About this RNA: The record gives the reactivity of an RNA of 177 nucleotides to 2A3 and DMS. For DMS the reverse transcriptase was MarathonRT. Reactivities are given for positions 27 through 126. It was measured as part of the RMDB library OK1LIB. The RNA was probed in 150 mM KOAc, 10 mM MgCl2 and 150 mM bicine (pH 8.5) at 24 C.
RNA sequence: GGGAACGACUCGAGUAGAGUCGAAAAGAAUUUUAGAAAAGCAAGGCCAUCAAAGCAGCACCCGAAAUGCUGAGGGCUAAUUUGGGGUUUAGGAGCAACCUUUCCUGGAAAAAGUGGAAAGGAAAGACACUAGGAGUGCUUUCGAGCACUCCUAGUGAAAAGAAACAACAACAACAAC
Reactivity to 2A3 in 0.01 (KOAc 150mM, MgCl2 10mM, bicine 150mM(pH8.5), 24C), signal-to-noise 1, nucleotides 027 to 126: g040a090a070u130u190u180u150a140g020a000a260a000a030g050c030a100a160g000g050c010c020a120u130c010a000a040a110g010c060a000g000c000a080c060c000c000g030a090a060a040u000g020c050u000g010a130g030g170g000c080u020a000a020u010u110u010g000g000g000g000u000u000u100a050g020g000a050g000c050a000a040c000c080u000u030u000c000c000u000g000g080a110a090a000a000a150g270u060g000g000a000a000a000g010g000a040a000a000g050a000
Reactivity to DMS in 0.01 (KOAc 150mM, MgCl2 10mM, bicine 150mM(pH8.5), 24C), signal-to-noise 1, nucleotides 027 to 126: g000a140a100u010u010u060u010a160g000a150a070a080a120g000c140a050a000g000g000c000c040a030u030c000a100a090a080g040c010a010g070c130a070c000c010c010g000a090a030a110u010g030c040u040g010a060g030g000g040c000u000a040a080u010u030u000g000g010g010g010u030u000u000a000g050g020a120g000c070a100a060c000c000u000u000u000c000c000u010g000g000a100a140a100a050a010g010u010g000g000a010a000a050g000g000a000a050a100g020a280